The record gives the reactivity of an RNA of 207 nucleotides to DMS and 2A3.
For DMS the reverse transcriptase was MarathonRT.
It was measured as part of the RMDB library M2RFPK.
The DMS profile rests on 16,718 reads.
For 2A3, 18,654 sequencing reads were counted.
Conditions: 150 mM KOAc, 10 mM MgCl2 and 150 mM bicine (pH 8.5), 24 C.
Values cover nucleotides 27 to 156.

RNA sequence: GGGAACGACUCGAGUAGAGUCGAAAACAUAGCGUUUCACAAUGUGCGCCAUUAACAUUGUUUAUGCAAGCACGUUUCGCAAUGUACGGCGCAGAAACAUUGCCAACUCAAAUACGCUUCACGAUGUAAAACAUCGGUGCGUUCGCGCACCGAUGAACAGUAAGAUCAAGUUCGCUUGAUCUUACUGAAAAGAAACAACAACAACAAC
Reactivity to DMS in 0.01 (KOAc 150mM, MgCl2 10mM, bicine 150mM(pH8.5), 24C), signal-to-noise 5, nucleotides 027 to 156: c060a110u000a060g020c030g010u000u000u010c110a080c010a030a080u000g010u000g020c010g020c020c020a140u000u000a100a070c040a040u010u020g010u000u000u010a040u020g010c040a130a130g030c080a110c090g010u010u000u000c160g030c030a010a010u000g040u000a070c050g020g020c030g040c020a070g000a120a100a110c020a030u000u000g010c020c070a060a090c080u000c080a080a060a160u000a040c050g010c010u000u000c080a080c060g010a160u010g010u000a050a070a090a220c000a010u000c000g020g030u000g020c010g020u000u020c260g020c020g010c000a010c000c000g000a000u000g010a020a080
Reactivity to 2A3 in 0.01 (KOAc 150mM, MgCl2 10mM, bicine 150mM(pH8.5), 24C), signal-to-noise 9, nucleotides 027 to 156: c050a060u140a020g010c010g010u020u100u100c120a040c010a030a020u030g010u020g020c010g010c020c020a070u130u150a080a020c000a010u010u020g080u050u100u120a130u160g060c100a070a100g070c060a050c190g030u040u120u120c050g000c000a010a000u000g000u020a020c050g000g000c010g000c010a010g040a010a050a000c010a010u000u020g050c060c040a070a070c070u040c120a030a120a060u110a040c020g020c010u080u080c120a080c110g090a080u130g050u270a040a060a070a050c000a000u000c000g000g000u000g000c000g010u020u040c140g010c000g000c060a000c010c010g000a000u000g000a000a000